[RMDB]
RNA sequence: GGGAACGACUCGAGUAGAGUCGAAAAGAAGGAAAGAAAUUAGCUCGCCAGUUAGCGAGGUCUGUCCCCACACGACAGAUAAUCGGGUGCAACUCCCGCCCCUUUUCCGAGGGUCAUCGGAACCAAAAAAACUCAGGCAACUUCGGUUGCCUGAGAAGAAUCAUCACCUGUUCGCAGGUGAUGAUUCAAAAGAAACAACAACAACAAC
Reactivity to 2A3 in 0.01 (KOAc 150mM, MgCl2 10mM, bicine 150mM(pH8.5), 24C), signal-to-noise 2, nucleotides 027 to 156: g070a020a010g040g040a110a090a050g040a070a110a030u120u040a090g050c010u010c020g000c000c020a140g190u110u120a010g000c020g010a010g000g010u010c010u000g000u020c040c010c070c020a030c010a000c030g000a000c010a020g020a010u050a030a050u080c030g020g000g000u010g010c020a010a010c040u000c000c000c000g000c010c000c000c010u100u130u040u020c010c000g000a000g010g000g020u070c040a000u000c000g010g020a010a010c040c010a000a010a060a060a020a060a020c000u010c000a000g000g000c000a010a000c000u030u080c130g080g000u000u000g010c000c000u000g000a000g010a000a000
Annotation: Chemical mapping of a 207-nucleotide RNA with 2A3. For 2A3, 1,407 sequencing reads were counted. The reactions ran in a buffer of 150 mM KOAc, 10 mM MgCl2 and 150 mM bicine (pH 8.5), at 24 C. Source: RMDB library M2RFPK, as collected in RNAgym.